Structure probing data (2A3 and DMS) for a 207-nucleotide construct.
High 2A3 reactivity points to a flexible backbone, as in loops and unpaired stretches.
The RNA was probed in 150 mM KOAc, 10 mM MgCl2 and 150 mM bicine (pH 8.5) at 24 C.
It was measured as part of the RMDB library M2RFPK.
The 2A3 profile rests on 4,334 reads.
[RMDB]
RNA sequence: GGGAACGACUCGAGUAGAGUCGAAAACCUCGCAUCGCAAGUUCGUGCUUGCGACUUACACGUAGGGCGAGUGGUGGGCGAAAGUUGCCAUGAGACCGUAACUUUCGUAGUCAUUGAUAAAGGGGCACAUGCCCUGACUAGUUCGCUAGUCAGGGAAGCAACGUAUACGGUUCGCCGUAUACGUUGCAAAAGAAACAACAACAACAAC
Reactivity to 2A3 in 0.01 (KOAc 150mM, MgCl2 10mM, bicine 150mM(pH8.5), 24C), signal-to-noise 5, nucleotides 027 to 156: c000c010u030c060g080c050a050u010c010g020c020a030a000g010u190u230c160g210u300g100c020u000u000g000c000g010a000c000u030u120a050c070a030c090g110u090a090g020g000g040c050g040a030g040u030g030g050u080g030g030g010c000g020a010a000a010g000u020u010g020c030c030a090u120g090a080g020a150c030c010g000u000a000a000c000u030u020u010c020g000u000a040g050u050c040a070u020u140g050a030u140a120a110a040g010g000g010g030c070a070c040a130u170g020c000c010c000u000g000a000c000u010a010g010u040u070c150g020c120u000a000g010u000c000a000g000g000g000a000a000
Reactivity to DMS in 0.01 (KOAc 150mM, MgCl2 10mM, bicine 150mM(pH8.5), 24C), signal-to-noise 2, nucleotides 027 to 156: c000c000u000c080g070c250a080u000c000g040c010a010a000g030u000u010c300g070u020g030c000u000u010g000c000g040a050c100u000u000a080c080a100c080g010u010a070g030g040g040c000g000a160g040u000g020g010u010g030g010g000c030g000a000a030a050g000u000u000g000c000c050a170u000g000a250g000a260c090c140g010u000a030a030c020u000u000u000c000g010u000a100g010u000c060a120u000u000g000a110u000a050a050a100g000g000g040g000c090a050c070a060u000g000c000c000c000u010g020a000c000u000a020g000u000u000c300g000c010u000a020g000u010c010a030g000g010g000a030a070